Source information:
The record gives the reactivity of an RNA of 177 nucleotides to DMS and 2A3. DMS adducts were read by reverse transcription with MarathonRT. The data come from the RNA Mapping Database (RMDB), library RFM100. 2A3 adducts were read by reverse transcription with SuperScript II with manganese. The DMS profile rests on 2,357 reads.
[RMDB]
RNA sequence: GGGAACGACUCGAGUAGAGUCGAAAAGAAAGAAAUUCUGGCUCCCCCUCUCUAAUCCUUGCUACCUGGGUGAGAGUGCUUUCUGAAUGCAAUGCACCUGGGCAAGGAUUCUGAGAGAGGGAGCAAAGCCAUAUUCAGGUUUCGACCUGAAUAUGGCAAAAGAAACAACAACAACAAC
Reactivity to DMS in 0.01 (KOAc 150mM, MgCl2 10mM, bicine 150mM(pH8.5), 24C), signal-to-noise 1, nucleotides 027 to 126: g000a120a090a140g000a060a150a050u000u010c080u000g020g010c000u020c000c030c010c020c000u000c000u000c010u000a010a020u000c000c000u000u000g000c150u050a090c180c040u000g000g010g030u000g000a020g000a300g000u010g030c010u000u020u000c300u080g030a110a070u010g000c070a040a000u000g010c010a010c000c000u000g000g010g000c000a010a000g000g000a010u000u030c080u000g000a030g000a000g000a020g010g000g000a000g020c000a000a000a110
Reactivity to 2A3 in 0.01 (KOAc 150mM, MgCl2 10mM, bicine 150mM(pH8.5), 24C), signal-to-noise 6, nucleotides 027 to 126: g110a020a080a010g110a040a120a010u120u050c040u050g050g000c000u010c000c000c000c000c000u000c000u000c000u000a010a010u000c000c000u020u000g010c030u110a220c020c010u070g030g000g000u000g010a030g010a030g020u010g000c000u060u150u080c130u110g210a190a080u230g000c000a000a020u040g020c000a000c010c000u000g000g010g000c000a000a000g000g000a000u090u020c070u010g010a000g000a000g000a000g010g000g000a000g010c000a000a020a010